Overview
Structure probing data (2A3 and DMS) for a 177-nucleotide construct. The data come from the RNA Mapping Database (RMDB), library TTRDES. DMS adducts were read by reverse transcription with MarathonRT. For DMS, 3,344 sequencing reads were counted. The RNA was probed in 150 mM KOAc, 10 mM MgCl2 and 150 mM bicine (pH 8.5) at 24 C.

[RMDB]
RNA sequence: GGGAACGACUCGAGUAGAGUCGAAAAGAUAUGGACCCGUACUUUUGACGAGGGCGAUCGGAAACGAUCGACAACCUCGAUAAGUACAGGGUCCUAAGUCAAACAUCACUGGUUCGCCAGUGAUGAACUAACAUGCCCAGUUCGCUGGGCAUGUUAGAAAAGAAACAACAACAACAAC
Reactivity to 2A3 in 0.01 (KOAc 150mM, MgCl2 10mM, bicine 150mM(pH8.5), 24C), signal-to-noise 3, nucleotides 027 to 126: g010a000u000a000u080g020g010a000c000c000c000g010u030a010c010u000u220u300u300g300a300c100g000a020g000g010g010c000g020a010u020c000g010g000a000a000a010c000g020a000u020c050g020a030c050a020a140c020c000u000c000g050a050u040a070a000g000u010a030c240a280g000g020g010u000c000c010u020a010a000g000u000c010a030a030a110c000a010u000c000a010c000u010g040g070u080u100c300g040c140c020a000g000u010g010a000u010g000a020a000
Reactivity to DMS in 0.01 (KOAc 150mM, MgCl2 10mM, bicine 150mM(pH8.5), 24C), signal-to-noise 3, nucleotides 027 to 126: g000a020u000a060u000g000g000a010c010c000c000g000u000a000c010u000u000u000u010g020a240c100g040a010g000g000g010c000g010a010u000c000g000g000a010a020a050c000g010a020u010c000g000a090c130a100a140c010c000u010c000g020a020u010a020a020g010u000a000c000a110g080g030g010u000c000c000u000a000a060g000u000c010a170a150a290c020a010u010c000a000c010u000g000g000u010u000c300g010c010c010a010g030u010g000a010u010g000a050a160